[RMDB]
Source information
The record gives the reactivity of an RNA of 207 nucleotides to 2A3. The reactions ran in a buffer of 150 mM KOAc, 10 mM MgCl2 and 150 mM bicine (pH 8.5), at 24 C. For 2A3 the reverse transcriptase was SuperScript II with manganese.
RNA sequence: GGGAACGACUCGAGUAGAGUCGAAAACAGACACUAAUCUUCUUACGCGAUACCAGUGGGACUUCAUAAAGCAAAAGGAAGAGGUCUCAGAUUAAUAAUUUCAAAAAAUCAUUUAUGGCUGCAUUACUCAAACAUUCAUUUUAAAAAGCCAAACACACAUCGUGGCAUUAUUCGUAAUGCCACGAUGAAAAGAAACAACAACAACAAC
Reactivity to 2A3 in 0.01 (KOAc 150mM, MgCl2 10mM, bicine 150mM(pH8.5), 24C), signal-to-noise 2, nucleotides 027 to 156: c010a000g130a000c020a010c130u080a210a140u040c040u140u010c030u040u110a070c030g000c030g070a020u070a140c040c050a130g110u090g000g000g000a010c000u040u000c070a090u070a160a180a000g050c050a140a140a000a000g040g050a020a110g020a000g000g000u010c000u010c000a050g000a030u040u040a070a070u090a090a100u070u150u290c090a040a050a000a050a050a070u070c020a030u110u150u220a070u090g030g010c050u050g000c060a050u060u090a120c030u120c100a050a220a140c030a000u110u100c010a020u120u090u130u240a050a140a010a040a000g000c000c000a040a130a010c070a040c050a000